[RMDB]
Source: RMDB library OK3TST, as collected in RNAgym. This 207-nucleotide RNA was probed chemically with 2A3 and DMS. The DMS profile rests on 2,366 reads. Reactivities are given for positions 27 through 156.
RNA sequence: GGGAACGACUCGAGUAGAGUCGAAAAUUGUUAAUGCGGACGGCACUGACGAUAUCGCCUUAAUGUCGGUGGUCAUCAAUGAUAAUCAGACCGGGCAAGUCGUCGCGAUGAAUGACUUAUCCAGUGGGCGUUAUGAUGUCACGGUCGAUGUGGGGCCCAAGUGUGGUGAGUUCGCUCACCACACUUGAAAAGAAACAACAACAACAAC
Reactivity to 2A3 in 0.01 (KOAc 150mM, MgCl2 10mM, bicine 150mM(pH8.5), 24C), signal-to-noise 2, nucleotides 027 to 156: u100u040g050u030u050a040a040u060g050c060g040g010a030c040g000g030c000a030c140u040g000a010c020g010a020u010a020u190c030g000c010c000u150u120a240a060u180g070u070c040g020g020u020g040g030u030c000a000u020c010a040a130u170g070a050u080a130a020u060c030a010g060a070c020c000g000g000g000c030a060a000g030u070c000g020u020c030g060c090g010a040u070g100a030a020u100g000a030c030u090u060a050u040c000c010a060g080u110g060g000g000c000g000u010u040a050u160g080a120u060g010u040c010a000c200g000g000u000c020g010a050u070g050u030g010g000g000g000c000c000
Reactivity to DMS in 0.01 (KOAc 150mM, MgCl2 10mM, bicine 150mM(pH8.5), 24C), signal-to-noise 1, nucleotides 027 to 156: u000u000g000u000u000a070a100u000g010c080g030g000a080c090g000g030c020a040c020u000g000a040c030g010a200u000a100u000c070g010c020c020u000u000a090a060u010g030u000c050g040g000u000g030g090u010c000a080u000c080a080a080u000g010a080u000a130a110u000c060a110g000a110c010c070g010g010g030c040a080a040g030u000c000g000u000c030g040c020g000a120u000g020a070a040u000g000a060c030u000u000a030u010c000c040a060g010u000g000g010g030c070g000u030u000a120u000g000a150u010g010u000c040a050c080g070g030u020c010g020a040u000g000u000g000g000g010g050c020c090